Conditions: 150 mM KOAc, 10 mM MgCl2 and 150 mM bicine (pH 8.5), 24 C. Chemical mapping of a 177-nucleotide RNA with DMS and 2A3. DMS adducts were read by reverse transcription with MarathonRT.
RNA sequence: GGGAACGACUCGAGUAGAGUCGAAAAGAAGACACCAUUCCAGUGGACCACUGUGACCUAAGAAGCAUUCAGCCAUCAUGAUGUGGCCUUUACCUCCACUCCUGUCCUUUCUACCCAGAUUCAGCACGUGAAUACUGUAGUUCGCUACAGUAUUCACAAAAGAAACAACAACAACAAC
Reactivity to DMS in 0.01 (KOAc 150mM, MgCl2 10mM, bicine 150mM(pH8.5), 24C), signal-to-noise 4, nucleotides 027 to 126: g000a140a070g000a130c050a090c040c020a090u000u010c050c030a080g030u000g000g010a060c080c040a040c070u000g010u000g010a040c060c040u000a070a090g000a090a090g020c060a080u000u000c090a110g010c100c050a050u000c100a080u000g000a050u010g010u000g010g010c050c030u000u010u000a060c060c010u000c020c010a100c050u000c020c020u000g010u010c030c020u000u000u000c040u000a110c030c010c010a100g000a120u000u000c070a070g010c140a120c190
Reactivity to 2A3 in 0.01 (KOAc 150mM, MgCl2 10mM, bicine 150mM(pH8.5), 24C), signal-to-noise 5, nucleotides 027 to 126: g040a030a020g080a000c020a030c030c020a040u080u000c040c020a030g050u060g040g090a090c020c000a020c070u040g040u060g070a080c000c010u100a160a050g050a060a010g080c020a050u120u100c040a030g030c040c000a040u050c020a030u150g080a060u090g070u040g060g000c000c000u090u130u070a080c010c010u000c020c000a030c000u000c010c010u060g040u050c020c000u040u080u000c010u050a080c000c010c010a020g020a110u090u100c030a020g060c070a030c150
The DMS profile rests on 3,643 reads. The 2A3 profile rests on 6,714 reads.